This 177-nucleotide RNA was probed chemically with DMS and 2A3.
It was measured as part of the RMDB library OK2TST.
[RMDB]
RNA sequence: GGGAACGACUCGAGUAGAGUCGAAAAGCUUUGGUCUACAGAAUAUUGUUUAUUCACCCACAACCUCGGUAGCGAACGCUGGCGCAAUCUUAAUUGGGCAAGAGCGUGGCGCGUUGCGUAUGCAUAAAACGACCAUACAGUUCGCUGUAUGGUCGUUAAAAGAAACAACAACAACAAC
Reactivity to DMS in 0.01 (KOAc 150mM, MgCl2 10mM, bicine 150mM(pH8.5), 24C), signal-to-noise 3, nucleotides 027 to 126: g000c060u020u000u000g020g000u000c010u000a130c110a080g010a040a070u030a030u010u020g000u010u020u010a040u010u010c020a230c050c020c030a040c100a070a050c080c050u010c060g030g000u000a100g020c000g020a130a040c020g010c010u010g000g000c200g010c040a020a030u010c210u010u010a060a100u010u000g000g000g040c010a110a300g000a040g000c040g010u000g000g010c040g000c060g000u000u010g010c030g020u010a090u010g000c070a020u010a030a030
Reactivity to 2A3 in 0.01 (KOAc 150mM, MgCl2 10mM, bicine 150mM(pH8.5), 24C), signal-to-noise 2, nucleotides 027 to 126: g010c010u000u050u130g000g080u080c040u030a050c060a090g040a080a030u080a010u040u160g150u130u190u080a050u030u090c030a030c030c040c000a040c000a020a100c000c010u000c020g100g060u080a020g010c000g000a040a000c000g000c020u020g080g000c060g000c090a000a000u080c000u130u140a220a200u200u120g000g160g000c030a060a000g030a010g120c010g010u000g100g030c020g000c010g000u000u040g000c040g060u100a060u180g030c020a040u150a070a300